[RMDB]
RNA sequence: GGGAACGACUCGAGUAGAGUCGAAAACAGAACUGGAUGGGCCGUGUGCUUAACCAGGACAAGAUCUCCUUCUCUCCAACGUUGUUGCCAACUCAUGAUUCUCCUAACCUGUGCUUGGAGAGACGGGCUACCAUAUAGGUGUUCGCACCUAUAUGAACUCUUAUAAGUACUUCGGUACUUAUAAGAGAAAAGAAACAACAACAACAAC
Reactivity to 2A3 in 0.01 (KOAc 150mM, MgCl2 10mM, bicine 150mM(pH8.5), 24C), signal-to-noise 2, nucleotides 027 to 156: c020a040g070a060a030c000u010g000g020a040u040g090g020g000c060c070g290u260g170u300g130c020u020u040a110a080c000c010a010g010g090a010c050a030a060g040a140u060c040u060c040c000u010u020c000u020c000u010c010c000a040a060c060g000u030u000g040u020u050g050c040c050a080a090c150u100c040a120u140g070a150u200u070c120u040c030c030u020a060a130c010c040u070g040u100g120c040u060u010g000g000a010g000a000g010a010c010g000g000g080c030u060a050c010c070a000u010a000u000a000g000g000u000g040u050u060c170g030c040a000c000c000u000a000u010a000u000g000a020a020
Reactivity to DMS in 0.01 (KOAc 150mM, MgCl2 10mM, bicine 150mM(pH8.5), 24C), signal-to-noise 2, nucleotides 027 to 156: c050a120g020a070a170c000u000g020g020a160u000g030g030g020c030c040g020u000g040u000g000c010u000u000a110a090c020c010a020g000g000a130c050a110a080g000a140u000c040u010c010c020u010u000c010u000c000u030c010c010a060a110c080g000u000u000g020u000u010g020c000c040a040a080c080u000c030a100u030g000a220u000u000c000u010c030c030u000a040a040c060c020u030g040u010g010c100u010u000g000g000a040g010a030g020a010c060g000g010g000c030u000a110c080c000a040u020a010u000a020g020g050u000g030u010u020c300g000c030a030c000c020u010a020u000a000u000g000a080a100

An RNA of 207 nucleotides, treated with 2A3 and DMS and read out base by base.
For 2A3, 1,369 sequencing reads were counted.
Source: RMDB library M2RFPK, as collected in RNAgym.
For DMS, 3,190 sequencing reads were counted.
Conditions: 150 mM KOAc, 10 mM MgCl2 and 150 mM bicine (pH 8.5), 24 C.